[RMDB]
RNA sequence: GGGAACGACUCGAGUAGAGUCGAAAAAGGUCGGGCUGUUCGCCGACGGCGUGGCGGUGGCGCAGAUCGGCCAGCACACCUUCGACAUCUGCAAGGACCACGUCGACGAAGUGAUCACCGUCAGCAAGUUUUAGUGGCUGUUCGCAGCCACUAAAACAAAAGAAACAACAACAACAAC
Reactivity to DMS in 0.01 (KOAc 150mM, MgCl2 10mM, bicine 150mM(pH8.5), 24C), signal-to-noise 2, nucleotides 027 to 126: a070g020g010u000c030g030g000g010c070u000g030u010u000c160g010c000c050g000a020c000g010g000c020g030u010g040g000c040g010g000u000g020g010c040g000c000a010g020a100u000c020g000g000c050c040a080g010c180a060c210a050c050c010u000u000c090g030a170c130a150u000c070u010g020c100a120a060g030g020a150c090c020a130c210g020u000c000g010a060c030g000a280a080g000u010g000a070u020c010a050c010c010g010u000c020a080g010c080a160a080
Reactivity to 2A3 in 0.01 (KOAc 150mM, MgCl2 10mM, bicine 150mM(pH8.5), 24C), signal-to-noise 1, nucleotides 027 to 126: a000g090g000u010c000g000g020g030c050u060g080u140u110c040g010c030c000g020a020c000g000g010c140g040u040g010g030c030g030g060u070g020g000c020g020c000a000g000a090u030c020g040g000c020c000a020g050c030a050c000a010c000c000u020u070c050g070a050c080a260u100c050u090g000c010a070a070g030g000a030c010c030a030c070g050u000c030g020a010c020g040a300a070g030u040g020a050u070c050a010c030c010g000u000c000a020g020c040a160a090
Source: RMDB library OK2TST, as collected in RNAgym. The record gives the reactivity of an RNA of 177 nucleotides to DMS and 2A3. The DMS profile rests on 1,241 reads. For DMS the reverse transcriptase was MarathonRT.